[RMDB]
RNA sequence: GGGAACGACUCGAGUAGAGUCGAAAAAGAAGAGAUAGUUAGGUCUAGGAUAGGUUUUCCAGACUGGUCUGAUCCUGAGUAUUCAUCAGAGGAGGAUGAUGCUGCCGUCACAUACUGGUGGGAGCAACCUCUACAGUAACUUCGGUUACUGUAGAGGAAAAGAAACAACAACAACAAC
Reactivity to 2A3 in 0.01 (KOAc 150mM, MgCl2 10mM, bicine 150mM(pH8.5), 24C), signal-to-noise 4, nucleotides 027 to 126: a010g090a020a000g060a000g030a110u120a100g120u110u070a050g040g000u000c040u060a090g020g020a040u060a090g240g090u130u070u080u000c010c010a010g020a040c030u030g040g020u020c020u030g020a030u030c000c000u010g010a020g020u080a190u180u170c090a090u020c010a050g020a020g090g040a040g050g000a020u060g020a030u070g030c020u040g090c000c010g020u010c010a050c020a120u300a160c090u050g050g000u010g030g000g000a000g010c010a010a060
Reactivity to DMS in 0.01 (KOAc 150mM, MgCl2 10mM, bicine 150mM(pH8.5), 24C), signal-to-noise 5, nucleotides 027 to 126: a070g000a120a090g010a080g000a060u000a070g000u000u000a090g010g010u000c030u000a090g010g000a040u000a100g010g020u000u000u010u000c040c050a090g000a040c050u000g020g000u010c030u000g010a170u000c040c010u010g000a080g000u000a090u000u010c100a070u000c010a060g010a080g010g010a200g010g000a050u000g010a090u000g010c010u000g010c010c030g010u000c020a040c180a120u000a110c220u010g010g010u000g010g000g010a070g010c040a060a130
Chemical mapping of a 177-nucleotide RNA with 2A3 and DMS. The reactions ran in a buffer of 150 mM KOAc, 10 mM MgCl2 and 150 mM bicine (pH 8.5), at 24 C. As a SHAPE reagent, 2A3 marks flexible, mostly unpaired nucleotides at the ribose 2'-OH. 2A3 adducts were read by reverse transcription with SuperScript II with manganese.